[RMDB]
RNA sequence: GGGAACGACUCGAGUAGAGUCGAAAAUUCAGGUUGCGCGUCAUGUGGGACGGCAUGCCGGGUAAUGUAAGGUGAUUUCAUUGUGCUGGCUCCGGAUGGCUGAACAGAAUUGCCCGUAUUCCGGUAAGACAUCAUUUAGGUUCGCCUAAAUGAUGUCAAAAGAAACAACAACAACAAC
Reactivity to 2A3 in 0.01 (KOAc 150mM, MgCl2 10mM, bicine 150mM(pH8.5), 24C), signal-to-noise 5, nucleotides 027 to 126: u050u020c020a030g080g060u050u070g060c300g010c020g050u020c030a080u100g070u170g270g070g010a020c000g000g000c010a030u030g010c000c010g020g020g020u070a080a050u060g050u080a050a060g110g090u120g100a100u030u140u070c050a040u060u140g050u080g130c040u020g030g000c000u020c010c030g050g030a030u080g060g000c010u030g010a030a000c010a030g120a090a090u070u070g030c000c010c020g010u060a130u090u000c010c020g000g040u020a070a030
Reactivity to DMS in 0.01 (KOAc 150mM, MgCl2 10mM, bicine 150mM(pH8.5), 24C), signal-to-noise 5, nucleotides 027 to 126: u000u000c040a110g010g020u010u000g010c040g010c030g030u000c020a100u010g030u010g020g000g000a060c040g000g010c030a040u000g020c030c030g000g000g020u000a050a040u000g010u000a070a070g010g020u010g010a130u000u000u000c040a080u000u000g030u000g000c050u000g010g000c040u000c040c040g010g000a040u000g010g010c030u000g000a060a060c090a090g000a070a080u000u010g010c010c000c030g000u000a140u000u000c010c020g010g010u010a080a140
Notes:
An RNA of 177 nucleotides, treated with 2A3 and DMS and read out base by base. The reactions ran in a buffer of 150 mM KOAc, 10 mM MgCl2 and 150 mM bicine (pH 8.5), at 24 C. The DMS profile rests on 8,718 reads.